Chemical mapping of a 170-nucleotide RNA with DMS and 2A3. DMS adducts were read by reverse transcription with MarathonRT.
[RMDB]
RNA sequence: GGGAACGACUCGAGUAGAGUCGAAAAAUGUGUCUCUAACUGUGCCACUCUGUGGUUCAGGAAACCUGGUUGAAAAACUUUCACCAUGGUUCAUGGAUGGCGAAAAUGCCUAUGAAGUGGUGAAGGCGGACUACGUCGUUCGCGACGUAGAAAAGAAACAACAACAACAAC
Reactivity to DMS in 0.01 (KOAc 150mM, MgCl2 10mM, bicine 150mM(pH8.5), 24C), signal-to-noise 5, nucleotides 027 to 129: a180u050g010u030g020u000c000u070c090u030a070a110c000u000g000u030g030c160c270a080c020u030c040u040g030u010g030g030u010u000c110a000g020g060a060a040a140c010c010u020g000g000u000u000g020a040a030a110a120a160c080u000u000u000c000a030c060c000a030u000g000g030u000u070c040a000u010g030g040a000u060g010g060c010g030a120a100a120a100u060g030c000c010u030a050u060g000a060a120g020u010g000g000u000g000a050a040g020g010c100g050g030a140
Reactivity to 2A3 in 0.01 (KOAc 150mM, MgCl2 10mM, bicine 150mM(pH8.5), 24C), signal-to-noise 4, nucleotides 027 to 129: a010u090g030u000g000u000c000u000c030u030a090a030c030u000g010u010g040c160c040a040c020u070c020u020g020u000g000g000u010u000c020a010g040g000a040a090a030c000c000u010g000g010u000u090g030a060a030a000a000a000c000u030u010u020c000a010c000c020a000u060g230g040u020u000c010a000u010g180g020a050u090g020g000c010g090a120a110a100a040u300g000c000c010u010a020u020g010a030a000g000u030g000g010u000g060a000a000g000g000c060g030g000a020

For 2A3, 10,389 sequencing reads were counted. The reactions ran in a buffer of 150 mM KOAc, 10 mM MgCl2 and 150 mM bicine (pH 8.5), at 24 C. It was measured as part of the RMDB library 15KLIB.